Description: An RNA of 177 nucleotides, treated with DMS and 2A3 and read out base by base. The RNA was probed in 150 mM KOAc, 10 mM MgCl2 and 150 mM bicine (pH 8.5) at 24 C. DMS adducts were read by reverse transcription with MarathonRT. For DMS, 6,744 sequencing reads were counted. The 2A3 profile rests on 5,176 reads. It was measured as part of the RMDB library OK2TST.
[RMDB]
RNA sequence: GGGAACGACUCGAGUAGAGUCGAAAAUUAUGAGCUGUUUACAUCUUGUACUGUGAACUAGUAUACUGUGAAUUUUCCUUUACUUGAUUAAUGUACUGUGAAUGUUCAACUGUGAAUAAAUAUUGAACUCCUAUUACUCAUUCGUGAGUAAUAGGAGAAAAGAAACAACAACAACAAC
Reactivity to DMS in 0.01 (KOAc 150mM, MgCl2 10mM, bicine 150mM(pH8.5), 24C), signal-to-noise 5, nucleotides 027 to 126: u000u000a060u000g010a180g010c030u010g000u000u000u010a020c030a040u000c090u010u020g000u010a090c200u000g000u010g010a020a060c050u000a040g020u000a120u000a100c090u000g000u010g010a030a050u000u010u000u000c000c000u000u000u000a010c010u000u010g010a160u010u000a070a070u000g010u000a040c010u000g000u020g020a030a030u000g010u000u000c030a030a110c080u000g000u000g010a100a060u010a050a080a090u000a140u000u000g000a090a110
Reactivity to 2A3 in 0.01 (KOAc 150mM, MgCl2 10mM, bicine 150mM(pH8.5), 24C), signal-to-noise 5, nucleotides 027 to 126: u120u040a100u160g060a010g020c020u010g020u040u050u040a010c010a020u030c030u130u200g080u090a070c050u030g010u020g040a030a000c020u020a020g030u040a070u050a150c040u040g010u030g090a030a030u040u010u040u050c000c000u010u020u010a020c010u030u070g190a210u170u230a210a080u130g000u000a010c000u020g080u090g180a080a040u040g020u010u030c040a160a090c080u040g010u020g080a070a060u100a090a060a020u190a090u060u110g060a060a030